[RMDB]
RNA sequence: GGGAACGACUCGAGUAGAGUCGAAAACAGGUCGAUAGUACCAAUAACCCUGGUACCAAUAAGGUACUAUCGACCAUUUAGCUCUUCUUCUACAACACGCUCGCUGAAGAAGAGCAUUUCGGGUACCAGGGCAGCGAGCGGAAGGCCGAGAGGCCGACAGCGAGUGACGUUUCGACGUCACUCGCUGAAAAGAAACAACAACAACAAC
Reactivity to 2A3 in 0.01 (KOAc 150mM, MgCl2 10mM, bicine 150mM(pH8.5), 24C), signal-to-noise 2, nucleotides 027 to 156: c000a050g010g010u010c000g010a010u000a000g000u020a020c010c080a080a080u180a040a070c000c000c000u000g000g000u010a000c020c050a090a070u230a230a110g000g000u000a000c000u000a000u000c000g000a000c000c000a000u050u020u150a020g010c000u010c020u000u040c000u020u090c020u040a110c030a220a010c090a050c110g000c020u000c000g000c020u020g000a020a000g010a030a000g000a020g010c000a010u020u100u130c090g000g000g020u010a010c000c000a000g000g000g000c030a000g000c010g010a000g000c000g000g050a140a040g000g000c010c010g050a060g020a020g100g000c020c000g000a000
Notes: The record gives the reactivity of an RNA of 207 nucleotides to 2A3. The reactions ran in a buffer of 150 mM KOAc, 10 mM MgCl2 and 150 mM bicine (pH 8.5), at 24 C. Source: RMDB library OK3TST, as collected in RNAgym.